[RMDB]
RNA sequence: GGGAACGACUCGAGUAGAGUCGAAAAAGCGAUGCGCGGGUGAUCCCUGUCGGCCCGCUGCAUAUCACCUCCGAUGAACCGGGUCACUUCCGCUUGUUUGUGGAUGGCGAGCAAAUUGUCGAUGCUGGUUUUAAAUAUACUUCGGUAUAUUUAAAACAAAAGAAACAACAACAACAAC
Reactivity to DMS in 0.01 (KOAc 150mM, MgCl2 10mM, bicine 150mM(pH8.5), 24C), signal-to-noise 6, nucleotides 027 to 126: a080g010c100g010a030u000g010c020g010c010g000g010g020u000g010a100u000c040c040c060u010g000u000c080g010g010c010c010c010g010c010u010g040c020a030u000a070u000c040a100c050c040u010c050c010g000a070u010g010a160a040c060c030g010g000g010u010c050a080c090u000u000c040c070g020c070u000u000g010u000u000u010g020u010g010g000a070u010g010g000c030g010a060g010c050a050a080a120u000u000g010u000c040g000a080u010g010c070u000g010
Reactivity to 2A3 in 0.01 (KOAc 150mM, MgCl2 10mM, bicine 150mM(pH8.5), 24C), signal-to-noise 4, nucleotides 027 to 126: a000g050c060g020a010u030g010c000g000c010g010g010g000u040g030a090u080c030c010c000u060g110u070c050g070g000c000c010c000g000c060u060g000c000a010u030a050u130c050a050c020c020u020c020c020g040a040u040g040a040a020c010c030g050g010g020u020c030a020c090u060u010c010c000g060c080u050u110g100u100u120u110g030u030g030g030a080u080g010g010c030g020a020g000c020a020a100a190u140u110g030u040c030g040a030u080g030c030u080g050